[RMDB]
RNA sequence: GGGAACGACUCGAGUAGAGUCGAAAAGGUAAUCUAUGGUUUCAUCCUGAGGGGCUCCUUGGCCUCUUCGCCCCAUUUUCACCCGGGCAUGUCUGGGAGUCGGCCAAUCCAUUCUGUGGCGAGAGCACGAGAAGACUUGAUUCGUCAAGUCUUCUCGAAAAGAAACAACAACAACAAC
Reactivity to DMS in 0.01 (KOAc 150mM, MgCl2 10mM, bicine 150mM(pH8.5), 24C), signal-to-noise 2, nucleotides 027 to 126: g020g010u000a080a040u030c080u010a100u000g000g020u000u000u010c050a100u000c010c010u000g000a080g010g000g010g020c020u010c100c120u000u010g000g000c000c030u000c030u010u020c150g000c000c000c010c120a160u010u000u000u000c090a080c140c060c140g000g000g020c050a050u010g010u000c080u000g020g000g000a040g010u000c040g000g000c040c040a050a120u000c030c030a080u000u010c070u000g010u010g000g030c070g010a120g020a110g020c130a230
Reactivity to 2A3 in 0.01 (KOAc 150mM, MgCl2 10mM, bicine 150mM(pH8.5), 24C), signal-to-noise 1, nucleotides 027 to 126: g040g020u060a030a060u060c050u090a100u210g050g000u100u200u130c020a060u020c080c030u050g070a090g020g030g010g000c020u000c020c100u080u090g060g000c020c050u050c090u040u030c010g000c000c010c010c010a030u120u020u070u180c060a050c000c010c010g000g020g000c050a070u080g050u100c010u060g010g010g000a030g050u010c030g040g000c020c010a000a040u050c020c000a060u140u080c040u090g100u020g090g000c030g030a070g010a030g070c010a000
The record gives the reactivity of an RNA of 177 nucleotides to DMS and 2A3.
2A3 adducts were read by reverse transcription with SuperScript II with manganese.
It was measured as part of the RMDB library OK2TRN.
For 2A3, 1,089 sequencing reads were counted.
The DMS profile rests on 1,683 reads.
The RNA was probed in 150 mM KOAc, 10 mM MgCl2 and 150 mM bicine (pH 8.5) at 24 C.